Record summary: An RNA of 177 nucleotides, treated with DMS and 2A3 and read out base by base. It was measured as part of the RMDB library OK2TST. The 2A3 profile rests on 6,286 reads. For DMS the reverse transcriptase was MarathonRT.
RNA sequence: GGGAACGACUCGAGUAGAGUCGAAAAAUGCGUCGCACCACCCUUCGAGCCGAUCGAUAUAGGACUGUGCGAUUCGCAGCGGAGGGUGCUUCGGGUUUUCCACUAUCGGAGUCGACAGAUCCGCACCUCCUUCCUAGGUAUUCGUACCUAGGAAGGAAAAAGAAACAACAACAACAAC
Reactivity to DMS in 0.01 (KOAc 150mM, MgCl2 10mM, bicine 150mM(pH8.5), 24C), signal-to-noise 6, nucleotides 027 to 126: a070u010g020c020g020u000c040g000c070a050c140c130a150c050c020c020u000u000c010g010a120g000c140c130g000a070u000c010g010a110u010a110u020a060g010g000a110c220u000g000u000g010c010g010a040u000u010c230g030c020a060g000c080g010g000a040g010g000g010u000g000c040u000u000c030g010g000g000u000u000u000u000c050c060a130c140u010a090u000c040g010g000a050g010u000c060g000a090c120a130g000a100u000c010c010g010c120a110c130c050
Reactivity to 2A3 in 0.01 (KOAc 150mM, MgCl2 10mM, bicine 150mM(pH8.5), 24C), signal-to-noise 5, nucleotides 027 to 126: a010u050g020c010g030u020c000g020c020a030c040c010a010c000c030c000u010u020c000g010a030g070c110c040g150a080u020c010g010a020u040a030u060a280g140g070a110c120u110g040u070g060c010g020a010u060u080c020g000c020a040g050c020g020g010a010g010g030g030u060g010c010u020u030c010g030g000g040u030u030u080u040c050c020a040c030u100a110u160c030g060g020a020g050u040c040g040a040c040a080g080a120u000c000c010g030c030a060c010c030